The record gives the reactivity of an RNA of 177 nucleotides to DMS and 2A3.
RNA sequence: GGGAACGACUCGAGUAGAGUCGAAAAAGCUCGAUGAUCGUCGUCCAUGAAUUGACCAGAUACUGGAACGAUCCGCGCACCUGAUCGAACACGUUGGUAAUCUGGCUCAUCAGGCCAAGCGUUAGCAAUCAUACUAUGCCUUCGGGCAUAGUAUGAUAAAAGAAACAACAACAACAAC
Reactivity to DMS in 0.01 (KOAc 150mM, MgCl2 10mM, bicine 150mM(pH8.5), 24C), signal-to-noise 6, nucleotides 027 to 126: a120g010c020u010c040g010a130u010g010a050u000c020g020u000c130g020u000c010c000a080u000g010a090a080u000u010g010a120c100c090a060g000a050u010a070c050u010g010g000a080a120c020g000a020u000c000c080g000c130g000c090a100c050c020u010g000a030u000c070g010a050a070c080a050c130g010u000u010g010g010u000a060a080u000c040u010g000g010c090u000c040a090u000c070a060g000g010c090c070a040a090g000c050g000u000u010a070g010c130a140
Reactivity to 2A3 in 0.01 (KOAc 150mM, MgCl2 10mM, bicine 150mM(pH8.5), 24C), signal-to-noise 4, nucleotides 027 to 126: a000g060c030u030c040g120a120u140g030a130u040c020g030u000c060g070u020c030c000a050u110g040a070a110u180u120g080a140c050c000a030g030a120u050a110c050u050g010g020a060a030c010g010a020u000c000c020g010c010g030c030a040c020c030u040g010a060u070c050g020a050a030c050a020c160g120u120u080g040g010u070a110a130u010c020u020g040g000c040u030c030a130u050c030a010g030g000c030c030a040a030g030c030g030u050u060a040g030c030a040